[RMDB]
RNA sequence: GGGAACGACUCGAGUAGAGUCGAAAAAUCUGCUUCGGCAGAUGUAUUUGGGGUCUUACCAUCUCUAGCGUGGACAUCGAUCAUACUGAAGCCUCCACGGUAUGGGAGUCUCGGGUGGUGAGACGGAGGCACCCUGCAUUACGAGUUCGCUCGUAAAGUCUACAAGAUGAUUCGUCAUCUUGUAGACAAAAGAAACAACAACAACAAC
Reactivity to 2A3 in 0.01 (KOAc 150mM, MgCl2 10mM, bicine 150mM(pH8.5), 24C), signal-to-noise 9, nucleotides 027 to 156: a000u000c000u010g010c010u040u070c200g170g000c000a000g030a030u030g040u050a230u040u150u170g050g000g010g000u000c000u000u000a000c010c000a020u010c070u010c100u210a170g130c140g270u300g070g010a030c020a060u300c130g020a020u060c010a010u010a010c000u030g040a120a020g010c000c000u000c000c010a010c000g000g010u000a010u000g010g000g000a040g010u000c030u050c110g030g000g000u000g000g000u000g000a000g000a010c020g000g000a000g000g000c000a030c000c000c000u060g060c090a140u060u050a000c000g000a000g020u060u110c180g080c110u000c000g010u010a030a020a060
Reactivity to DMS in 0.01 (KOAc 150mM, MgCl2 10mM, bicine 150mM(pH8.5), 24C), signal-to-noise 2, nucleotides 027 to 156: a010u010c000u000g010c000u000u010c300g020g050c010a030g020a010u000g000u000a050u000u000u010g030g040g020g020u000c010u000u000a040c000c000a020u010c020u000c060u000a150g030c150g000u010g010g000a040c050a150u010c140g010a140u000c030a040u020a070c030u000g010a010a190g000c020c020u010c000c020a300c040g010g010u030a150u000g000g010g010a070g030u000c010u000c040g000g030g040u000g000g030u000g010a040g010a050c010g040g010a040g080g090c000a040c020c010c000u030g010c060a160u010u000a040c020g010a060g040u000u010c300g010c020u000c010g020u010a010a010a150
Overview:
Chemical mapping of a 207-nucleotide RNA with 2A3 and DMS. Source: RMDB library RNAMAK, as collected in RNAgym. The DMS profile rests on 4,615 reads. The RNA was probed in 150 mM KOAc, 10 mM MgCl2 and 150 mM bicine (pH 8.5) at 24 C. 2A3 adducts were read by reverse transcription with SuperScript II with manganese. For 2A3, 11,665 sequencing reads were counted.